[RMDB]
An RNA of 177 nucleotides, treated with DMS and read out base by base.
Source: RMDB library M2PK50, as collected in RNAgym.
The RNA was probed in 150 mM KOAc, 10 mM MgCl2 and 150 mM bicine (pH 8.5) at 24 C.
Values are in units of 0.01, from 0 to 300, in steps of 10.

RNA sequence: GGGAACGACUCGAGUAGAGUCGAAAACUCUGACGCUUCGGCGUCAGAGAAACCUCUAAGCAGAUUGGCCAGGACGACGCUGCGGAGCGCGUUUGCCAACAAAAACGCAUAGAUUCGUCUAUGCGAAGUCUCUGACUAUCUUCGGAUAGUCAGAGACAAAAGAAACAACAACAACAAC
Reactivity to DMS in 0.01 (KOAc 150mM, MgCl2 10mM, bicine 150mM(pH8.5), 24C), signal-to-noise 1, nucleotides 027 to 126: c000u000c000u000g040a030c010g030c000u000u000c160g050g040c020g000u000c000a000g000a000g000a020a080a200c010c030u000c150u000a150a090g000c210a140g010a170u000u000g010g020c010c260a100g000g000a050c000g000a080c010g000c010u000g000c300g000g000a040g000c060g010c010g030u000u000u000g030c000c030a000a020c080a060a050a060a120a260c030g010c000a000u000a000g010a060u000u000c180g000u000c000u000a010u000g000c030g030a000a080